This 207-nucleotide RNA was probed chemically with 2A3.
For 2A3, 566 sequencing reads were counted.
The RNA was probed in 150 mM KOAc, 10 mM MgCl2 and 150 mM bicine (pH 8.5) at 24 C.
Values cover nucleotides 27 to 156.
RNA sequence: GGGAACGACUCGAGUAGAGUCGAAAAGCUAGUCGGAGACGACUAGCAACGAUCAGUUCGCUGAUCGGAAGGUGCAUUCAAAUACGCUAGAAGCACCAAUACACGACGCUUAGCGUAAAACUGAGAAAGCAGAUAACAAAAAUAAAAAGGCGUCGGGCAUCCCGAUUAGGUUCGCCUAAUCGGGAUGAAAAGAAACAACAACAACAAC
Reactivity to 2A3 in 0.01 (KOAc 150mM, MgCl2 10mM, bicine 150mM(pH8.5), 24C), signal-to-noise 1, nucleotides 027 to 156: g010c000u000a000g020u010c030g000g000a030g000a150c030g000a030c010u000a000g010c020a000a000c000g000a000u000c000a000g050u050u060c110g070c160u010g000a000u010c000g000g020a070a040g020g010u020g010c050a240u010u060c010a000a060a000u030a010c020g000c010u020a000g000a010a010g010c010a000c000c000a000a030u070a050c110a020c010g010a000c000g000c020u080u080a020g020c020g010u010a000a080a120a080c000u030g010a000g170a260a180a020g100c050a000g030a220u190a130a010c090a020a180a080a070a000u160a110a110a030a070a020g030g000c010g010u010c000g030g000g020